[RMDB]
RNA sequence: GGGAACGACUCGAGUAGAGUCGAAAAGACCAUCGUUUUCUGCACGGUGAGGUUGAGCAGCCGGGCUUGUGCCCAAAUCAUCAGCGCUGCAGCCAGAUACAGCGCCAACGCCAGCGCCAGUGUUCGCUGUUUAAGUGUACUUCGGUACACUUAAACAAAAAGAAACAACAACAACAAC
Reactivity to DMS in 0.01 (KOAc 150mM, MgCl2 10mM, bicine 150mM(pH8.5), 24C), signal-to-noise 6, nucleotides 027 to 126: g010a170c060c020a110u010c070g010u000u000u000u000c040u000g030c090a080c070g000g000u000g000a100g010g010u010u000g000a100g030c030a090g020c070c080g010g010g010c010u010u020g020u010g030c020c010c020a050a070a090u000c110a100u000c120a100g020c080g010c010u000g010c050a070g020c080c060a090g000a140u000a070c070a080g010c040g010c030c060a040a070c110g010c040c040a070g000c040g010c050c030a070g020u010g000u000u000c060g010c140
Reactivity to 2A3 in 0.01 (KOAc 150mM, MgCl2 10mM, bicine 150mM(pH8.5), 24C), signal-to-noise 4, nucleotides 027 to 126: g040a000c000c010a020u080c060g010u050u030u110u010c050u070g020c050a020c060g030g040u050g040a070g040g040u080u110g050a030g040c030a010g030c040c040g030g030g000c040u140u210g090u220g080c040c010c050a060a090a050u140c040a020u040c030a020g070c020g010c080u010g000c010a010g020c020c000a020g010a080u160a060c020a030g000c010g020c020c020a070a020c050g030c030c020a030g020c020g020c020c030a050g010u020g020u120u080c040g010c080